[RMDB]
This 207-nucleotide RNA was probed chemically with DMS and 2A3. The 2A3 profile rests on 1,197 reads. The RNA was probed in 150 mM KOAc, 10 mM MgCl2 and 150 mM bicine (pH 8.5) at 24 C. For DMS the reverse transcriptase was MarathonRT.

RNA sequence: GGGAACGACUCGAGUAGAGUCGAAAACAAUUCCUUAUACCUUGAGUAUUGCUGAAUUCAGUUUAGCGUGCAUGCUCUUGGCUAUUCUCAUAGUGAUUGUCAAAUUUGGAGUUACUUAUUCGUCAAUAAAACACUACCACGUUCGCGUGGUAGUGAAGGUGUAUUACCUCUUCGGAGGUAAUACACCAAAAGAAACAACAACAACAAC
Reactivity to DMS in 0.01 (KOAc 150mM, MgCl2 10mM, bicine 150mM(pH8.5), 24C), signal-to-noise 1, nucleotides 027 to 156: c050a070a190u020u020c040c010u010u000a130u000a030c020c000u000u010g020a040g040u000a050u000u000g030c040u000g000a060a060u000u000c120a210g000u000u000u000a040g060c000g030u000g010c040a210u000g010c010u000c020u000u000g040g040c040u000a120u000u020c030u000c060a120u010a120g000u010g000a070u000u000g040u020c020a050a060a200u000u000u000g010g000a140g010u010u000a080c060u000u000a100u010u000c100g040u000c080a080a120u010a060a090a040a190c000a030c000u000a000c000c000a000c000g040u000u000c260g040c050g080u000g000g000u000a010g000u010g020a000a010
Reactivity to 2A3 in 0.01 (KOAc 150mM, MgCl2 10mM, bicine 150mM(pH8.5), 24C), signal-to-noise 3, nucleotides 027 to 156: c050a010a040u040u030c000c020u010u100a120u000a060c000c000u000u000g020a010g020u030a070u230u140g030c020u040g050a220a140u110u210c100a130g160u070u080u120a050g050c050g010u060g060c030a000u020g000c000u000c000u000u010g000g010c010u040a040u150u100c120u030c090a090u100a060g080u060g110a090u040u050g040u090c080a050a060a210u110u060u080g080g010a020g070u060u010a080c020u110u120a090u240u130c080g120u090c030a100a030u120a160a150a000a000c000a000c000u000a000c000c000a000c000g000u030u030c150g050c000g120u000g000g010u000a000g000u000g000a000a000